[RMDB]
RNA sequence: GGGAACGACUCGAGUAGAGUCGAAAAGAUAUGGACACUCGUCGAUAAGCUGUGUGUCGGAAACGACACCAGCUUUUGACGACGUUGUCCUAAGUCAAAGUCUAACGUCCUUCGGGACGUUAGACAAUCAAUCGACAUUGUUCGCAAUGUCGAUUGAAAAAGAAACAACAACAACAAC
Reactivity to 2A3 in 0.01 (KOAc 150mM, MgCl2 10mM, bicine 150mM(pH8.5), 24C), signal-to-noise 2, nucleotides 027 to 126: g020a030u050a020u120g000g000a000c000a000c010u020c010g020u000c020g030a110u110a300a010g000c000u010g040u010g000u000g020u300c010g000g000a050a060a010c010g010a000c000a000c000c000a000g010c000u000u000u000u030g000a000c010g010a000c040g030u070u060g000u000c000c000u040a060a010g050u030c030a100a100a040g000u000c010u000a010a000c000g000u010c020c000u030u120c270g060g000g000a000c000g000u010u000a000g000a000c000a020a000
Reactivity to DMS in 0.01 (KOAc 150mM, MgCl2 10mM, bicine 150mM(pH8.5), 24C), signal-to-noise 4, nucleotides 027 to 126: g010a040u000a300u000g000g000a030c000a010c020u000c000g010u000c000g010a050u010a010a020g020c000u010g010u020g030u000g020u000c000g020g000a070a090a180c000g010a010c010a010c010c010a000g000c000u000u000u000u000g010a010c000g000a000c300g010u010u000g000u010c000c000u000a010a060g000u000c040a100a110a130g010u000c000u000a000a010c010g010u000c000c000u000u000c220g000g000g000a010c000g000u000u010a000g010a000c000a020a040